[RMDB]
RNA sequence: GGGAACGACUCGAGUAGAGUCGAAAACUCGCCUGUGCUAUAUUUUGUUUUUCGGUUAGUUAAAUAUCGUACGUUCAUAUUUGAACGUUCUGCCGGAAUGCAUUAUCAAUAGAGGUAAAGUCGCAACCUUGAGAGGCGGGUUCGCCCGCCUCUCAAGAAAAGAAACAACAACAACAAC
Reactivity to 2A3 in 0.01 (KOAc 150mM, MgCl2 10mM, bicine 150mM(pH8.5), 24C), signal-to-noise 1, nucleotides 027 to 126: c000u050c000g000c000c010u110g030u200g120c030u000a000u040a020u020u010u000u020g000u000u000u000u000u000c030g000g000u090u300a090g010u080u100a100a210a040u160a130u150c080g000u140a000c000g000u010u020c050a000u070a170u300u220u090g000a020a000c000g000u020u000c060u070g000c000c000g000g000a000a000u000g000c000a000u000u030a010u040c030a080a040u000a040g080a000g020g000u110a160a000a000g070u000c070g000c130a030a030c000
Record summary: Chemical mapping of a 177-nucleotide RNA with 2A3. For 2A3 the reverse transcriptase was SuperScript II with manganese. The RNA was probed in 150 mM KOAc, 10 mM MgCl2 and 150 mM bicine (pH 8.5) at 24 C. 2A3 is a SHAPE reagent: it acylates the 2'-hydroxyl of flexible nucleotides of all four kinds. Values cover nucleotides 27 to 126.